Overview
An RNA of 177 nucleotides, treated with 2A3 and read out base by base. Reactivities are given for positions 27 through 126. For 2A3, 395 sequencing reads were counted.
RNA sequence: GGGAACGACUCGAGUAGAGUCGAAAACAGGGGAUCUCGAGAGACAGUGUGGCCGCGGGUAUAACGCGACGCUAGCGCUCUGCCUUGUGUCUCUAGAGCGUAGGCUGCUUGACGAGGGGCUCCGCUAGGAGUGCCCACGCUUCGGCGUGGGCACUCCAAAAGAAACAACAACAACAAC
Reactivity to 2A3 in 0.01 (KOAc 150mM, MgCl2 10mM, bicine 150mM(pH8.5), 24C), signal-to-noise 1, nucleotides 027 to 126: c100a010g000g060g000g020a020u100c000u000c000g060a180g000a000g020a130c000a000g000u000g000u010g200g000c030c000g040c010g020g010g050u300a080u060a190a010c000g060c000g040a000c000g060c000u000a000g060c000g030c000u060c000u090g000c000c030u120u140g230u080g040u120c000u060c000u150a070g000a000g010c010g000u000a010g300g000c010u000g000c000u210u030g080a190c000g000a000g020g040g000g090c000u080c010c010g000c000u070a130